[RMDB]
RNA sequence: GGGAACGACUCGAGUAGAGUCGAAAAUCGAAGGUGCAUAGGUUACAGGGCACGUCGGUCUGGUUGGAGUCCGCGACGUAUCGAAACACGUCCAUCUCCUGGCGCCCGACGAUCACGCCGCCGUCGCAGCGCUCCAGGUAAAACAGCAUCUUGGCCAUGCCAUAAGCUGAUUCGUCAGCUUAUGGCAAAAAGAAACAACAACAACAAC
Reactivity to 2A3 in 0.01 (KOAc 150mM, MgCl2 10mM, bicine 150mM(pH8.5), 24C), signal-to-noise 1, nucleotides 027 to 156: u190c040g040a070a000g020g010u020g010c030a010u060a110g000g030u030u010a030c000a020g020g000g020c040a010c010g000u000c000g010g060u070c030u160g200g000u080u090g020g010a050g050u030c110c090g030c080g020a000c010g010u030a100u170c220g070a140a070a050c110a010c020g000u010c030c000a050u020c010u000c030c010u000g080g020c000g000c000c000c000g020a010c010g010a060u090c080a040c090g040c040c010g000c000c000g010u020c020g000c050a010g030c010g010c010u030c010c000a040g000g050u100a060a000a000a060c010a040g050c000a000u080c000u020u030g070g000c040c020a050
Reactivity to DMS in 0.01 (KOAc 150mM, MgCl2 10mM, bicine 150mM(pH8.5), 24C), signal-to-noise 1, nucleotides 027 to 156: u000c020g000a090a070g010g030u000g000c040a060u010a050g010g030u000u020a090c080a120g000g040g000c040a100c000g040u000c020g020g000u000c100u000g060g020u010u040g020g000a080g000u000c090c120g010c020g020a010c010g000u020a110u000c060g040a150a170a130c210a040c070g000u000c010c030a140u000c020u000c050c010u000g020g010c030g000c090c090c000g010a080c040g000a050u000c050a040c070g020c060c030g020c080c090g000u000c040g000c050a110g000c030g000c000u020c030c050a040g000g020u000a000a060a080a060c050a120g000c000a060u020c060u000u000g010g010c050c040a170

An RNA of 207 nucleotides, treated with 2A3 and DMS and read out base by base.
DMS adducts were read by reverse transcription with MarathonRT.
For 2A3, 1,207 sequencing reads were counted.
Reactivities are given for positions 27 through 156.
The RNA was probed in 150 mM KOAc, 10 mM MgCl2 and 150 mM bicine (pH 8.5) at 24 C.